This 177-nucleotide RNA was probed chemically with 2A3 and DMS. Values cover nucleotides 27 to 126. The 2A3 profile rests on 1,957 reads. For DMS the reverse transcriptase was MarathonRT. In probing experiments dimethyl sulfate is read out at A N1 and C N3, which are open when not base-paired. The DMS profile rests on 2,605 reads.
[RMDB]
RNA sequence: GGGAACGACUCGAGUAGAGUCGAAAAUACUUAGUACACGCGUAUCGGUUUGCACUCCAGAUGUAGCAAUUGAAAACGAAGAUAUUCCUGGAAAGUUUGCAACCGCGUGGGUGCUAGGCAGUGCACACAAACCAUUAACGUUCGCGUUAAUGGUUUGAAAAGAAACAACAACAACAAC
Reactivity to 2A3 in 0.01 (KOAc 150mM, MgCl2 10mM, bicine 150mM(pH8.5), 24C), signal-to-noise 2, nucleotides 027 to 126: u060a020c010u020u010a000g020u040a000c010a000c010g040c020g030u050a090u300c030g060g000u110u150u100g020c000a010c030u020c000c000a020g000a060u110g070u130a020g070c100a080a110u060u090g130a090a080a050a080c120g040a030a020g020a060u060a040u100u040c020c000u000g010g020a110a200a040g080u120u170u140g020c020a000a010c000c010g000c000g000u010g000g000g000u000g000c000u010a000g000g000c030a040g090u060g070c030a040c000a000
Reactivity to DMS in 0.01 (KOAc 150mM, MgCl2 10mM, bicine 150mM(pH8.5), 24C), signal-to-noise 3, nucleotides 027 to 126: u010a070c010u000u000a020g010u000a000c000a010c000g010c010g000u010a110u020c120g000g000u010u010u010g020c010a070c150u000c000c010a010g010a100u010g000u010a040g010c080a130a110u000u020g020a090a110a090a120c230g020a080a100g030a110u000a050u000u010c100c000u000g000g010a040a090a110g010u000u000u010g010c000a020a020c000c010g030c010g030u000g000g000g000u010g010c010u000a010g010g000c060a040g020u000g020c140a080c190a130